[RMDB]
RNA sequence: GGGAACGACUCGAGUAGAGUCGAAAAGAUAUGGAUCAUUCUGAACGUCGGCAGUCUUUUGACGCCAUAGUGUCGGAAACGACAUGAUUGGCGAUAAGACUGCGACGUUCAGAAUGAUCCUAAGUCAGUACAAUAAAAUGUUCGCAUUUUAUUGUACAAAAGAAACAACAACAACAAC
Reactivity to DMS in 0.01 (KOAc 150mM, MgCl2 10mM, bicine 150mM(pH8.5), 24C), signal-to-noise 3, nucleotides 027 to 126: g010a070u000a300u000g000g000a020u000c010a020u000u000c000u000g000a010a010c000g010u000c000g040g020c010a010g010u000c010u010u000u010u020g030a290c070g000c000c000a010u000a130g020u000g010u000c010g010g000a170a110a240c000g000a020c000a000u000g000a300u020u000g010g000c010g020a120u000a020a010g000a000c000u000g020c020g000a010c000g010u010u010c010a000g020a000a000u000g000a000u000c010c010u000a000a080g020u010c040a160